[RMDB]
RNA sequence: GGGAACGACUCGAGUAGAGUCGAAAAGAUAUGGAAUCACUUACACAACAGCUUACUGCUUCGGAAACGAAGUUAAGACAUGUGUGAGUGAUUCCUAAGUCAAAAUCGCAAGGUUCGCCUUGCGAAACUCUAGUGUCUACUUCGGUAGACACUAGAGAAAAGAAACAACAACAACAAC
Reactivity to DMS in 0.01 (KOAc 150mM, MgCl2 10mM, bicine 150mM(pH8.5), 24C), signal-to-noise 3, nucleotides 027 to 126: g000a040u000a300u010g000g000a000a000u000c000a000c000u000u010a010c000a020c010a090a050c250a180g000c010u000u000a030c300u010g000c010u000u020c020g010g020a070a080a130c000g030a000a010g000u010u010a010a000g010a020c070a190u010g040u000g020u000g010a000g020u000g020a000u000u000c010c000u000a000a030g000u000c000a080a050a120a150u000c000g000c010a010a000g010g010u000u020c280g040c000c000u000u010g010c000g010a020a050a100
Reactivity to 2A3 in 0.01 (KOAc 150mM, MgCl2 10mM, bicine 150mM(pH8.5), 24C), signal-to-noise 3, nucleotides 027 to 126: g020a010u040a020u080g010g000a030a000u000c010a000c010u010u040a010c010a010c020a260a300c080a180g030c000u010u040a050c070u150g050c000u000u010c000g020g030a040a030a020c010g000a010a000g020u020u040a010a010g020a000c090a300u300g020u000g010u010g030a000g000u000g000a000u000u000c010c000u000a010a000g000u000c020a020a010a000a300u070c000g000c000a000a010g060g010u060u120c300g190c050c000u000u000g000c010g000a000a000a000